[RMDB]
RNA sequence: GGGAACGACUCGAGUAGAGUCGAAAAGGGGACGUUCUUGGAUUCGACAGGGGUCCCCGAGCUUAUUAAGCGUGUCGGAGGGUUGGCUCCGUCAUCAACACAUUUCGGUUAAAUAUAACUGACAAAUCAAACAAUAAUUUCGCAGUAGCUGCGUAAUAGUCUGAUGAAAGUUCGCUUUCAUCAGACUAAAAGAAACAACAACAACAAC
Reactivity to 2A3 in 0.01 (KOAc 150mM, MgCl2 10mM, bicine 150mM(pH8.5), 24C), signal-to-noise 2, nucleotides 027 to 156: g030g000g010g000a010c010g250u250u000c060u000u090g170g070a300u300u150c090g040a010c030a000g000g000g000g000u000c000c000c000c000g000a010g000c000u070u110a040u090u270a190a050g020c000g040u030g050u060c000g030g010a010g050g000g000u240u050g000g020c010u000c010c000g070u090c000a000u000c010a000a030c000a000c020a000u040u090u030c010g000g000u020u010a140a250a000u250a190u000a200a000c000u000g030a010c050a100a120a080u270c110a080a110a090c050a000a000u280a100a030u040u150u100c000g000c000a020g070u170a070g100c050u060g000c030g010u000a010a010u030
Structure probing data (2A3) for a 207-nucleotide construct.
The reactions ran in a buffer of 150 mM KOAc, 10 mM MgCl2 and 150 mM bicine (pH 8.5), at 24 C.
The data come from the RNA Mapping Database (RMDB), library ARCHII.
Values are in units of 0.01, from 0 to 300, in steps of 10.